[RMDB]
RNA sequence: GGGAACGACUCGAGUAGAGUCGAAAAAUGCAUGUCGAGAGUAUAUGUCCUCUCGUUAAUCAAACAUAUAUUGUUAUAGUCGCAAACGACGAAAAUUACGCUCUAGCAGCUUAAACCCUGUUUACUUGGUUGCUGAUCAUCUACAGUUGGUCAACUACAAGAACUAAGUGUUCGCACUUAGUUCUUGAAAAGAAACAACAACAACAAC
Reactivity to DMS in 0.01 (KOAc 150mM, MgCl2 10mM, bicine 150mM(pH8.5), 24C), signal-to-noise 3, nucleotides 027 to 156: a090u000g000c030a070u020g030u010c010g020a010g010a020g000u000a080u000a080u010g000u000c150c010u000c020u000c010g010u000u000a010a040u000c050a060a050a050c020a040u000a070u000a150u000u000g000u000u000a110u000a100g010u000c000g010c060a080a090a120c040g030a070c020g000a060a080a070a110u000u010a070c050g020c020u000c040u000a090g010c040a060g020c040u010u000a050a040a080c020c050c000u000g010u000u000u000a080c080u010u000g000g000u010u000g020c000u010g000a060u010c030a050u010c070u010a110c120a130g010u010u000g020g030u010c020a020a070c030u010a180
Reactivity to 2A3 in 0.01 (KOAc 150mM, MgCl2 10mM, bicine 150mM(pH8.5), 24C), signal-to-noise 6, nucleotides 027 to 156: a000u140g000c070a050u070g050u120c010g000a000g000a000g000u020a010u000a000u060g010u070c040c010u000c000u010c020g100u040u010a010a020u010c030a000a000a010c000a010u030a000u020a060u060u120g060u190u130a180u040a160g030u020c040g020c130a130a140a120c080g030a010c010g030a080a020a000a010u150u090a020c050g030c020u030c020u060a030g000c030a010g000c010u050u090a070a090a090c020c010c040u020g040u050u080u070a100c040u040u100g050g000u040u050g020c030u020g020a050u060c020a040u000c040u130a110c050a080g000u020u010g010g010u040c020a030a020c020u080a030

The record gives the reactivity of an RNA of 207 nucleotides to DMS and 2A3.